[RMDB]
RNA sequence: GGGAACGACUCGAGUAGAGUCGAAAAUGUCCAGAGAAGUCACACAAACUUAGACAUUUCUUCUUCUGAUGUCCACUUGCCAUGACUGUGUGAGGAAGGGAGAGGUCUCUGAAGUGGCUACCAGGGCCUCCUAAGCAGAAUUCGUUCUGCUUAGGAGAAAAGAAACAACAACAACAAC
Reactivity to DMS in 0.01 (KOAc 150mM, MgCl2 10mM, bicine 150mM(pH8.5), 24C), signal-to-noise 6, nucleotides 027 to 126: u020g020u000c000c040a110g000a110g010a160a040g000u000c020a010c010a070c090a130a110a220c030u010u010a030g010a020c040a040u000u000u000c010u010u020c010u000u020c010u000g010a140u020g010u000c070c120a090c040u010u030g010c110c110a140u010g000a060c070u000g000u010g000u010g010a120g000g000a050a060g000g010g000a030g000a050g000g000u000c000u000c020u010g000a080a080g020u000g000g000c000u010a050c060c030a140g000g000g010c070
Reactivity to 2A3 in 0.01 (KOAc 150mM, MgCl2 10mM, bicine 150mM(pH8.5), 24C), signal-to-noise 9, nucleotides 027 to 126: u050g000u000c000c000a000g020a010g020a160a010g010u010c010a010c000a000c020a050a170a060c030u020u030a010g010a000c000a050u050u060u010c020u180u010c000u020u000c010u050g120a130u150g110u090c060c010a060c100u140u160g070c080c050a190u160g050a220c060u040g030u040g060u090g130a030g010g020a010a010g020g020g000a020g010a020g050g010u000c000u000c000u030g050a140a040g010u010g010g000c000u020a060c010c040a040g000g010g000c000

An RNA of 177 nucleotides, treated with DMS and 2A3 and read out base by base. For DMS the reverse transcriptase was MarathonRT.